The record gives the reactivity of an RNA of 177 nucleotides to DMS and 2A3. For DMS, 23,394 sequencing reads were counted. It was measured as part of the RMDB library OK2TRN. For 2A3 the reverse transcriptase was SuperScript II with manganese. The RNA was probed in 150 mM KOAc, 10 mM MgCl2 and 150 mM bicine (pH 8.5) at 24 C. The 2A3 profile rests on 39,218 reads. Reactivities are given for positions 27 through 126.

[RMDB]
RNA sequence: GGGAACGACUCGAGUAGAGUCGAAAACGGUGAUGACACGCGCUGCGUCGUCGACGAUGUAAACAACGCGAUAGUUGCCGAGGCGGAUGCGGUAAGUGGUGUCGAAGCCACUCAUCUUCUCGCAGCCCAGUAGUGUCUAUUUCGAUAGACACUACUGAAAAGAAACAACAACAACAAC
Reactivity to DMS in 0.01 (KOAc 150mM, MgCl2 10mM, bicine 150mM(pH8.5), 24C), signal-to-noise 9, nucleotides 027 to 126: c050g020g020u000g000a080u010g010a130c260a090c020g010c020g020c030u000g010c020g010u000c010g010u000c130g010a080c080g010a140u010g010u010a080a080a240c080a040a040c050g000c050g010a060u000a240g000u000u000g010c010c010g000a120g010g010c010g000g010a040u000g020c300g000g000u000a040a040g010u000g010g010u000g010u000c300g000a140a230g000c010c000a020c010u000c040a030u000c020u000u000c030u000c020g010c070a150g010c030c020
Reactivity to 2A3 in 0.01 (KOAc 150mM, MgCl2 10mM, bicine 150mM(pH8.5), 24C), signal-to-noise 9, nucleotides 027 to 126: c020g010g020u030g010a030u060g010a010c010a010c170g010c000g010c030u050g010c020g110u010c020g100u090c070g050a070c030g020a050u110g090u270a110a150a080c040a060a020c070g010c020g080a060u050a080g020u010u010g010c010c010g010a050g060g000c030g020g020a070u110g020c030g030g010u040a080a020g010u020g040g010u040g050u110c060g020a040a010g010c000c000a010c000u020c010a060u020c000u080u010c080u030c010g000c020a030g040c010c010